The record gives the reactivity of an RNA of 177 nucleotides to 2A3 and DMS.
RNA sequence: GGGAACGACUCGAGUAGAGUCGAAAAUGAGGUUUUGGUCCUUUAGGACAGGGGACUGCCUUCCUGGAAAGUGGUCUCCGGUUGUUCCUCGUUCCUGGAAGAUGGCGGGAGGAACAACCCCUCACAUAUCCGCUUUCUUAUUCGUAAGAAAGCGGAUAAAAGAAACAACAACAACAAC
Reactivity to 2A3 in 0.01 (KOAc 150mM, MgCl2 10mM, bicine 150mM(pH8.5), 24C), signal-to-noise 5, nucleotides 027 to 126: u100g010a020g040g080u140u130u300u210g110g020u060c020c000u120u260u260a150g000g000a010c030a010g000g000g000g010a000c010u000g000c010c030u050u020c020c070u130g110g070a090a040a010g030u030g000g000u000c000u000c000c000g000g010u000u000g000u000u000c000c000u020c050g300u030u000c000c000u020g020g020a060a020g110a130u230g000g000c010g030g030g000a000g000g000a000a000c000a000a000c010c000c000c010u000c010a050c000a010u090
Reactivity to DMS in 0.01 (KOAc 150mM, MgCl2 10mM, bicine 150mM(pH8.5), 24C), signal-to-noise 1, nucleotides 027 to 126: u020g020a000g000g000u000u000u000u010g000g030u000c000c000u000u000u070a030g000g000a000c030a170g000g000g000g020a000c000u000g000c010c100u000u000c030c200u010g000g000a010a020a040g030u000g020g000u000c010u000c010c010g000g010u000u010g000u000u000c000c000u000c000g010u020u000c000c020u000g000g070a240a160g020a130u000g000g010c120g040g000g000a000g030g000a000a020c000a000a000c000c030c050c030u000c000a130c200a160u090
Conditions: 150 mM KOAc, 10 mM MgCl2 and 150 mM bicine (pH 8.5), 24 C.